RNA sequence: GGGAACGACUCGAGUAGAGUCGAAAAGGGGAAUUUGGCUUUGGACAGGCAUUUGCCAUGAUAACAGAAUAUUCAUUUAGAAAUGGUCCAGGAAAUUGGUUUGAUGAGAAUGAAGUGCCUGUGAAGAUACACAUAAGUUGUUCGCAACUUAUGUGUAAAAAGAAACAACAACAACAAC
Reactivity to 2A3 in 0.01 (KOAc 150mM, MgCl2 10mM, bicine 150mM(pH8.5), 24C), signal-to-noise 4, nucleotides 027 to 126: g010g020g000g060a040a050u110u040u140g060g010c050u060u030u060g080g060a010c020a020g010g000c020a020u030u020u100g020c010c010a020u040g040a040u070a110a030c050a040g100a130a020u100a090u150u100c040a030u030u090u170a070g040a020a160a040u050g010g030u040c000c010a020g100g030a030a080a090u120u030g040g020u080u070u130g100a080u060g030a040g040a090a030u090g000a060a000g020u010g020c010c000u000g000u000g020a000a020g020a050
Reactivity to DMS in 0.01 (KOAc 150mM, MgCl2 10mM, bicine 150mM(pH8.5), 24C), signal-to-noise 7, nucleotides 027 to 126: g010g000g000g010a140a100u000u000u000g010g000c050u000u010u010g010g010a060c030a030g000g010c010a050u000u000u010g010c030c020a030u000g010a180u000a060a110c150a140g000a090a080u000a090u010u000c030a070u000u000u000a090g000a080a090a070u000g010g000u000c020c020a040g000g010a040a060a090u010u000g010g010u000u010u000g010a110u000g010a150g000a070a060u000g010a050a040g010u000g000c020c010u000g010u000g010a100a080g010a220